[RMDB]
RNA sequence: GGGAACGACUCGAGUAGAGUCGAAAAGAAAGGACUCAGCCCGGUGCUGGAUCGGGGAUAAUAGUGUGUCCUGAACGGUUAAAUGGGGGAGAACCAAACCGGAAUCUCCGAAAUCAGCGAAAAAGAAGGGUAUAUGUUCAUUCGUGAACAUAUACCCAAAAGAAACAACAACAACAAC
Reactivity to 2A3 in 0.01 (KOAc 150mM, MgCl2 10mM, bicine 150mM(pH8.5), 24C), signal-to-noise 5, nucleotides 027 to 126: g110a010a090a010g010g010a010c030u030c080a060g050c010c000c010g100g070u130g000c000u030g000g030a030u010c000g000g000g000g020a010u030a150a060u110a120g190u140g020u040g020u120c000c000u010g010a040a010c000g000g050u080u160a130a140a100u200g020g000g000g000g020a180g090a050a040c000c000a100a010a020c000c000g000g050a030a030u020c010u020c020c010g010a070a030a120u080c000a000g000c010g070a080a080a000a000a010g190a050a100
Reactivity to DMS in 0.01 (KOAc 150mM, MgCl2 10mM, bicine 150mM(pH8.5), 24C), signal-to-noise 5, nucleotides 027 to 126: g010a100a070a050g010g010a000c010u000c160a150g010c000c010c000g000g010u030g010c000u000g000g010a070u000c000g020g010g000g000a020u020a090a150u050a070g010u040g030u010g010u000c000c000u000g000a080a100c040g000g000u000u010a030a080a190u010g000g000g000g000g000a120g020a090a130c020c030a040a040a060c010c020g020g000a110a110u010c000u000c000c000g000a030a100a070u000c000a010g000c000g010a060a090a060a090a110g020a160a100